[RMDB]
Chemical mapping of a 177-nucleotide RNA with 2A3 and DMS.
DMS adducts were read by reverse transcription with MarathonRT.
The data come from the RNA Mapping Database (RMDB), library TTRDES.
The DMS profile rests on 1,846 reads.
The reactions ran in a buffer of 150 mM KOAc, 10 mM MgCl2 and 150 mM bicine (pH 8.5), at 24 C.
RNA sequence: GGGAACGACUCGAGUAGAGUCGAAAAGAUAUGGAAUCACGAGCCGAUAAGUCGGUGUCGGAAACGACACCCGACUUUUGACGGCUCCGUGUGAUUCCUAAGUCAAAUCCAUAGUUCGCUAUGGAAAUCAAAUGUGCAAGUUCGCUUGCACAUUUGAAAAAGAAACAACAACAACAAC
Reactivity to 2A3 in 0.01 (KOAc 150mM, MgCl2 10mM, bicine 150mM(pH8.5), 24C), signal-to-noise 1, nucleotides 027 to 126: g010a000u050a030u160g010g000a020a010u030c010a010c000g000a020g010c010c070g150a180u080a300a000g000u000c020g010g000u000g010u040c000g000g010a000a040a010c010g000a000c010a010c060c030c020g050a010c000u010u010u000u090g190a140c050g030g030c000u000c000c010g040u070g020u010g000a010u000u000c000c000u010a050a000g040u000c010a030a040a200u070c010c000a050u000a020g000u000u140c300g000c150u000a010u030g090g000a000a000a120
Reactivity to DMS in 0.01 (KOAc 150mM, MgCl2 10mM, bicine 150mM(pH8.5), 24C), signal-to-noise 2, nucleotides 027 to 126: g000a070u000a300u020g000g000a010a010u000c000a060c020g000a020g030c000c000g020a140u000a010a020g030u000c000g010g010u000g020u000c010g000g010a050a050a180c000g030a010c000a020c130c080c050g030a010c000u010u000u010u000g020a230c150g010g000c000u000c010c300g000u000g030u000g000a030u000u000c000c000u000a020a100g000u000c000a110a130a160u000c000c000a010u000a010g010u010u020c300g030c010u000a000u000g000g000a020a080a200